[RMDB]
RNA sequence: GGGAACGACUCGAGUAGAGUCGAAAAAAGAAGCAAGCAUGCCAGUGUAUACAUUUAAUGAAAUAAAAUGGUCGUGCACAUAGAGAACAAGACCGUAUAUACAGUACCAAAGCUUUUUAUAUGCACACCAGACCGUAUUAGCCCUGGUCUAUAAGAGCAUCUACGUCUUCUUCGGAAGACGUAGAUGAAAAGAAACAACAACAACAAC
Reactivity to 2A3 in 0.01 (KOAc 150mM, MgCl2 10mM, bicine 150mM(pH8.5), 24C), signal-to-noise 3, nucleotides 027 to 156: a000a000g070a050a000g050c100a060a000g030c030a050u100g030c030c010a020g040u010g010u070a040u080a080c060a040u050u110u300a280a160u160g110a090a030a030u190a060a200a030a060u060g030g010u030c080g010u070g020c000a010c000a010u080a010g060a000g000a050a020c040a100a060g050a070c020c060g040u000a000u000a000u020a050c050a030g030u020a020c060c000a120a040a020g010c020u000u060u020u050u020a040u030a010u060g000c000a000c010a000c020c020a010g020a030c050c050g010u060a090u050u130a060g030c080c000c020u010g010g000u000c060u060a110u040a040a030g050a020g060
Reactivity to DMS in 0.01 (KOAc 150mM, MgCl2 10mM, bicine 150mM(pH8.5), 24C), signal-to-noise 1, nucleotides 027 to 156: a060a060g000a120a070g020c030a090a110g050c040a010u020g020c000c020a070g000u000g000u010a060u010a030c010a090u000u020u000a080a080u000g000a030a130a140u010a070a090a100a090u010g010g010u000c020g040u000g000c000a020c030a060u000a140g010a130g000a050a050c010a050a100g000a090c050c140g000u000a110u000a100u000a040c070a110g010u000a090c040c030a120a050a180g010c030u020u000u000u000u000a050u010a060u000g000c010a050c030a080c010c000a020g000a050c070c050g020u000a080u000u010a070g000c070c000c010u010g000g030u010c050u000a140u010a060a080g010a140g030
The record gives the reactivity of an RNA of 207 nucleotides to 2A3 and DMS. Values cover nucleotides 27 to 156. The 2A3 profile rests on 1,491 reads. DMS adducts were read by reverse transcription with MarathonRT. The DMS profile rests on 2,194 reads. The RNA was probed in 150 mM KOAc, 10 mM MgCl2 and 150 mM bicine (pH 8.5) at 24 C. The data come from the RNA Mapping Database (RMDB), library OK3TST. 2A3 adducts were read by reverse transcription with SuperScript II with manganese.